[RMDB]
RNA sequence: GGGAACGACUCGAGUAGAGUCGAAAACCGUAGGUUUCUUUUGACGCGAUGGAGUACGGCCAACAGCUUCGCUUCGAAAGAGGCGAAGACAUGGCUAAAACAUCGCGAUAAGAAACCUAAACGGAAACGUUUUUGGUCGUUCGCGACCAAAAACGAAGUUUAUGCUCAUGUUCGCAUGAGCAUAAACAAAAGAAACAACAACAACAAC
Reactivity to DMS in 0.01 (KOAc 150mM, MgCl2 10mM, bicine 150mM(pH8.5), 24C), signal-to-noise 1, nucleotides 027 to 156: c000c010g000u020a040g010g000u000u000u000c010u030u060u010u000g050a290c100g050c010g010a040u010g020g020a220g040u010a190c110g000g000c000c010a010a130c140a270g020c000u000u000c000g010c000u010u010c010g010a160a140a300g000a010g040g020c010g000a010a030g000a000c060a290u000g000g010c010u010a000a210a200a160c020a010u000c050g020c010g000a020u000a020a040g000a010a000a000c000c020u010a000a010a150c030g000g010a120a140a110c010g000u000u000u060u000u000g020g000u000c010g040u000u000c220g030c000g000a030c010c000a000a000a000a030a030c010g030a030a100
Reactivity to 2A3 in 0.01 (KOAc 150mM, MgCl2 10mM, bicine 150mM(pH8.5), 24C), signal-to-noise 4, nucleotides 027 to 156: c000c000g020u000a000g010g010u020u000u010c020u040u110u100u160g190a110c030g000c000g000a000u010g020g030a060g170u080a070c120g020g000c000c010a070a030c090a190g020c000u000u000c000g010c000u000u000c000g050a080a100a070g010a000g020g000c010g000a010a000g010a010c010a080u050g000g000c030u030a020a020a010a030c000a000u000c000g000c000g000a010u010a000a000g000a000a000a000c000c000u000a060a050a010c010g030g030a080a050a020c000g000u000u000u000u000u000g000g000u010c010g020u050u090c260g000c000g080a000c000c000a000a000a000a000a000c000g000a020a000